[RMDB]
RNA sequence: GGGAACGACUCGAGUAGAGUCGAAAACCAUUAUCUCUCAUAAUGCUACUGUUAAAUAUGGAAUGGCUCUUUUAUUGCUUAAAAAUGGUGGUUCCUUUGGAUGGUUGAAUAAAAGAGGAUUAUGGCACUUAAAUCAAUGGCAAAAUAUGACAAAUCACAUCACUAAUGACUUCGGUCAUUAGUGAUGAAAAGAAACAACAACAACAAC
Reactivity to DMS in 0.01 (KOAc 150mM, MgCl2 10mM, bicine 150mM(pH8.5), 24C), signal-to-noise 2, nucleotides 027 to 156: c010c020a190u010u010a070u010c020u000c040u020c020a120u000a080a070u000g010c020u000a070c030u010g020u000u000a070a060a130u000a070u010g010g030a100a110u000g020g020c020u000c030u000u000u020u000a040u030u000g030c020u000u000a010a050a100a080a060u000g010g030u000g020g020u010u010c000c020u000u000u000g010g010a100u000g000g060u000u000g030a090a090u000a030a060a070a140g020a070g010g010a100u000u010a090u000g020g030c020a060c040u000u000a030a070a090u000c020a030a080u000g020g010c060a030a040a060a080u010a080u030g010a070c090a040a050a170u000c080a160
Reactivity to 2A3 in 0.01 (KOAc 150mM, MgCl2 10mM, bicine 150mM(pH8.5), 24C), signal-to-noise 5, nucleotides 027 to 156: c010c010a010u070u110a110u020c060u000c000u000c040a070u090a160a040u100g030c020u010a050c040u020g050u110u100a100a190a110u120a080u110g020g030a040a050u040g050g010c010u050c020u060u080u050u050a100u110u140g030c020u070u140a050a080a010a020a020u110g020g040u030g010g050u070u170c000c000u060u030u070g080g010a030u030g040g050u050u050g060a100a020u070a120a020a030a020g040a000g000g030a020u050u060a020u060g020g000c030a020c060u060u110a030a070a050u060c080a040a060u030g040g040c020a050a050a080a040u190a090u100g040a060c110a030a110a050u210c180a090